[RMDB]
RNA sequence: GGGAACGACUCGAGUAGAGUCGAAAAGCAGCAGUCGCACCAGAAACCAAGAGCCUCUGUGCUUAUGCCAGGAGGAGGGCCUUGCCCGACUGAGAGUGCUCGCUGAAAGAGGCUGCGACGCGGGUUAUCUUCUUCCAGGUUUCGACCUGGAAGAAGAAAAAGAAACAACAACAACAAC
Reactivity to DMS in 0.01 (KOAc 150mM, MgCl2 10mM, bicine 150mM(pH8.5), 24C), signal-to-noise 2, nucleotides 027 to 126: g020c090a170g020c040a130g020u000c010g020c020a050c050c000a090g040a180a110a070c190c060a080a150g020a010g000c000c000u010c000u000g000u030g000c030u030u000a020u060g000c000c030a060g010g030a000g000g000a300g000g000g010c000c170u030u040g000c010c000c000g000a220c020u000g000a090g000a090g020u050g010c010u000c030g000c200u030g000a060a090a060g000a300g000g000c140u000g010c000g010a020c020g030c000g000g000g000u000u000a030
Reactivity to 2A3 in 0.01 (KOAc 150mM, MgCl2 10mM, bicine 150mM(pH8.5), 24C), signal-to-noise 4, nucleotides 027 to 126: g050c050a000g020c030a020g010u010c000g030c020a020c060c000a010g170a060a060a010c040c000a090a040g020a020g060c010c010u010c040u060g100u200g100c010u180u220a110u300g020c000c000a020g030g080a050g000g050a100g000g010g000c070c120u210u270g030c000c000c000g020a060c030u050g060a020g010a010g080u260g030c000u000c020g040c040u030g040a050a120a010g080a060g000g000c120u020g000c000g010a040c020g010c000g010g040g000u100u130a060
Overview: Structure probing data (DMS and 2A3) for a 177-nucleotide construct. DMS (dimethyl sulfate) methylates the pairing face of unpaired adenines and cytosines. The data come from the RNA Mapping Database (RMDB), library RFM100. The RNA was probed in 150 mM KOAc, 10 mM MgCl2 and 150 mM bicine (pH 8.5) at 24 C.